Chemical mapping of a 177-nucleotide RNA with 2A3. It was measured as part of the RMDB library RFM100.
RNA sequence: GGGAACGACUCGAGUAGAGUCGAAAACACCGCCCCUAUAGUCCUUUUCUAAACCUUAUGGCUGGUGCAGCCGCCCGCCAGUGCUUGCGGGUGUGCACAGGCCUACAUCUAGGGUCAUAGGUGGGGAUAGCGACGACAGCUUCGGCUGUCGUCGCUAAAAAGAAACAACAACAACAAC
Reactivity to 2A3 in 0.01 (KOAc 150mM, MgCl2 10mM, bicine 150mM(pH8.5), 24C), signal-to-noise 1, nucleotides 027 to 126: c050a030c000c000g070c000c000c000c030u070a050u080a050g060u030c080c000u000u060u070u200c120u160a130a060a020c000c090u130u100a010u110g020g000c080u070g010g000u010g040c040a000g060c010c030g000c000c000c000g000c000c030a200g000u120g170c060u170u060g000c010g000g000g020u030g000u000g110c000a000c000a000g000g000c000c000u010a000c010a090u080c070u050a000g030g000g020u120c000a120u020a040g080g000u170g060g000g050g000a060